[RMDB]
RNA sequence: GGGAACGACUCGAGUAGAGUCGAAAAGAUAUGGAACUAAUGGAGAGCGAUGAAGUCGGAAACGAUGGAGCUCCCAUAGUUCCUAAGUCAAAACAUGGACGAUUUCGUUCGCGAAAUCGUCCAUGAAGAUGCAUUUCUUCUUCGGAAGAAAUGCAUCAAAAGAAACAACAACAACAAC
Reactivity to DMS in 0.01 (KOAc 150mM, MgCl2 10mM, bicine 150mM(pH8.5), 24C), signal-to-noise 1, nucleotides 027 to 126: g000a050u010a300u010g010g030a010a010c020u000a050a060u000g000g010a100g000a030g010c000g050a070u030g000a210a150g000u010c000g000g000a170a100a170c010g000a030u000g000g000a050g000c030u000c000c000c010a000u000a010g030u010u010c000c000u000a020a020g030u020c030a150a050a110a150c050a000u000g000g010a020c000g010a020u000u000u000c000g030u000u010c230g010c000g010a010a000a010u010c000g010u000c000c000a000u010g010a020a080
Reactivity to 2A3 in 0.01 (KOAc 150mM, MgCl2 10mM, bicine 150mM(pH8.5), 24C), signal-to-noise 1, nucleotides 027 to 126: g020a030u040a060u150g010g000a000a010c000u050a080a180u030g030g010a300g000a020g300c060g300a300u060g020a080a030g040u000c020g000g080a040a090a090c010g000a000u000g000g050a000g030c000u000c000c000c000a000u000a000g000u000u000c000c000u000a070a010g000u020c040a030a000a130a110c000a000u000g000g020a000c020g030a000u010u000u030c000g010u070u070c300g010c010g120a010a000a030u010c060g000u000c020c000a010u000g000a010a000